[RMDB]
Background: The data come from the RNA Mapping Database (RMDB), library OK2TRN. An RNA of 177 nucleotides, treated with DMS and 2A3 and read out base by base. The DMS profile rests on 4,002 reads. 2A3 adducts were read by reverse transcription with SuperScript II with manganese. The reactions ran in a buffer of 150 mM KOAc, 10 mM MgCl2 and 150 mM bicine (pH 8.5), at 24 C.

RNA sequence: GGGAACGACUCGAGUAGAGUCGAAAAUACGGUACCGAUCACCAUGAUGACUAGUCUAGUGUCUGUCCAUGAGACAUCUCGGUACCAUACUAGCGUACUGUACGUACACAUGUGCAGAGUGUACAUGCAGUCGUUCAUGAUUCGUCAUGAACGACUGAAAAGAAACAACAACAACAAC
Reactivity to DMS in 0.01 (KOAc 150mM, MgCl2 10mM, bicine 150mM(pH8.5), 24C), signal-to-noise 4, nucleotides 027 to 126: u000a070c110g000g000u000a010c000c010g020a030u000c140a180c050c000a040u000g000a180u020g020a050c050u000a050g020u000c040u010a090g000u020g000u000c070u000g000u000c030c010a030u000g000a110g010a140c180a070u020c140u000c020g000g010u000a000c000c010a040u000a050c110u010a060g030c140g010u000a040c050u000g010u010a040c090g010u000a000c030a110c000a070u010g020u000g020c120a110g010a120g010u010g010u000a000c000a120u000g000
Reactivity to 2A3 in 0.01 (KOAc 150mM, MgCl2 10mM, bicine 150mM(pH8.5), 24C), signal-to-noise 4, nucleotides 027 to 126: u130a030c080g000g000u010a010c010c000g010a010u050c030a000c070c010a010u040g040a050u090g000a050c090u140a090g020u070c030u090a110g090u060g060u300c030u050g010u000c010c000a060u060g020a030g050a180c060a120u080c050u000c040g000g020u010a000c000c000a000u040a010c010u050a030g080c020g080u040a020c040u050g060u200a040c020g030u030a000c040a010c000a050u080g040u070g080c070a030g100a100g260u070g000u020a010c000a010u070g030